[RMDB]
RNA sequence: GGGAACGACUCGAGUAGAGUCGAAAAACGUGGGACGAACAUGGAAAAACCAUAUAUGUUGAUAGACUGUGCACAUUUACAUAUAGAGCUAGUUUUCAAUGGUUUCAUGAUACAGAAGUUCAUUGACCAACCUAAGCUUAUUCGUAAGCUUAGGUUGAAAAGAAACAACAACAACAAC
Reactivity to DMS in 0.01 (KOAc 150mM, MgCl2 10mM, bicine 150mM(pH8.5), 24C), signal-to-noise 9, nucleotides 027 to 126: a100c080g030u000g010g000g010a040c060g010a090a220c060a050u010g000g000a040a060a040a070a070c050c040a090u000a050u000a050u010g010u000u000g010a040u010a080g020a090c060u000g010u000g010c080a080c070a050u000u000u000a040c060a040u000a040u000a040g010a110g030c120u010a050g000u000u000u000u000c030a060a040u000g000g010u000u000u000c030a020u000g010a100u010a080c150a080g010a080a090g010u000u000c050a090u000u000g010a140c270
Reactivity to 2A3 in 0.01 (KOAc 150mM, MgCl2 10mM, bicine 150mM(pH8.5), 24C), signal-to-noise 8, nucleotides 027 to 126: a000c060g030u080g020g000g030a010c040g020a160a020c020a060u030g030g030a080a050a030a000a030c020c010a010u040a000u010a010u110g070u070u040g030a030u040a100g070a040c050u080g060u120g190c050a020c010a090u080u110u150a090c050a040u180a010u050a120g060a010g070c050u060a020g040u000u030u020u040c030a040a030u030g000g000u000u000u050c020a020u030g040a060u070a170c070a060g110a110a020g070u030u050c030a030u080u160g040a030c020
Chemical mapping of a 177-nucleotide RNA with DMS and 2A3. Source: RMDB library OK2TRN, as collected in RNAgym. The reactions ran in a buffer of 150 mM KOAc, 10 mM MgCl2 and 150 mM bicine (pH 8.5), at 24 C. Reactivities are given for positions 27 through 126. DMS adducts were read by reverse transcription with MarathonRT.